The record gives the reactivity of an RNA of 177 nucleotides to 2A3 and DMS. High 2A3 reactivity points to a flexible backbone, as in loops and unpaired stretches. The reactions ran in a buffer of 150 mM KOAc, 10 mM MgCl2 and 150 mM bicine (pH 8.5), at 24 C.
RNA sequence: GGGAACGACUCGAGUAGAGUCGAAAAUCCUCAGCGACGGACCGGGCCCAAGUUCCCUGGAAAGGGACGCCUGGGAGGGUGAGAGCCCCGUCCGGCCCGGACCCUGCCGCACCACGAGGCGCCGUCAACGAGUUUAUUCCUUCGGGAAUAAACUCGUAAAAGAAACAACAACAACAAC
Reactivity to 2A3 in 0.01 (KOAc 150mM, MgCl2 10mM, bicine 150mM(pH8.5), 24C), signal-to-noise 1, nucleotides 027 to 126: u040c000c000u080c040a040g030c020g000a000c010g000g030a010c010c000g010g000g000c000c000c010a010a010g020u100u060c030c000c000u020g060g010a070a020a020g020g010g010a020c000g000c020c000u050g060g010g000a060g000g010g020u040g010a000g020a000g020c000c000c000c000g030u010c000c020g000g040c000c000c010g000g020a010c010c000c030u060g000c010c000g000c000a030c070c000a050c110g040a040g050g000c010g020c060c000g060u060c010a010
Reactivity to DMS in 0.01 (KOAc 150mM, MgCl2 10mM, bicine 150mM(pH8.5), 24C), signal-to-noise 1, nucleotides 027 to 126: u010c020c000u000c070a100g000c050g000a050c070g000g000a110c070c020g000g030g090c000c030c080a020a040g000u000u040c000c000c000u000g000g040a300a120a000g000g030g000a020c010g020c030c030u020g000g000g000a300g000g000g000u000g010a020g000a070g000c000c090c000c020g000u040c080c180g000g000c000c010c000g030g030a050c120c070c000u010g060c000c060g000c040a110c090c090a160c110g000a000g040g020c100g050c010c000g000u060c030a150